[RMDB]
RNA sequence: GGGAACGACUCGAGUAGAGUCGAAAAGGGAAUGGUGGUUUACCCCGUUAUCAAAUGAUUACCGACCAAUAAUUGGCGAAACUCGUUUCGCGUUGGCUGCCUAAUUCAAGGAAUUAGCGUGCGUUCAAAGACAUCAAGAAGUUCGCUUCUUGAUGAAGCAUCUUACAUACUUCGGUAUGUAAGAUGCAAAAGAAACAACAACAACAAC
Reactivity to 2A3 in 0.01 (KOAc 150mM, MgCl2 10mM, bicine 150mM(pH8.5), 24C), signal-to-noise 2, nucleotides 027 to 156: g060g040g050a130a150u240g010g020u070g010g000u050u070u300a160c050c020c010c020g120u080u090a140u050c030a000a060a170u180g030a010u030u040a020c000c030g010a030c060c000a040a020u210a170a060u060u140g040g020c030g040a000a010a040c050u050c060g070u000u010u010c010g000c000g010u030u050g100g000c020u040g010c040c000u040a050a020u050u040c090a180a040g220g050a050a040u020u010a050g010c030g030u030g000c060g010u000u050c000a030a060a030g060a050c000a030u000c000a000a000g000a000a000g000u000u230c230g050c130u000u000c010u000u000g010a040u030g000a010a010
Reactivity to DMS in 0.01 (KOAc 150mM, MgCl2 10mM, bicine 150mM(pH8.5), 24C), signal-to-noise 2, nucleotides 027 to 156: g050g000g000a030a040u010g000g020u010g010g010u000u000u000a140c020c000c020c010g060u000u010a060u020c120a080a100a120u000g010a060u000u000a040c020c030g040a140c020c000a010a050u020a060a220u000u000g020g050c000g020a050a060a030c040u020c080g040u000u000u000c020g030c040g020u010u000g000g020c000u010g000c110c010u000a010a040u010u000c030a120a120g030g010a070a050u000u000a040g010c050g000u010g010c050g000u000u010c070a040a060a030g010a230c020a000u000c010a000a010g040a020a040g000u010u020c300g060c010u000u000c000u000u000g000a000u020g020a020a090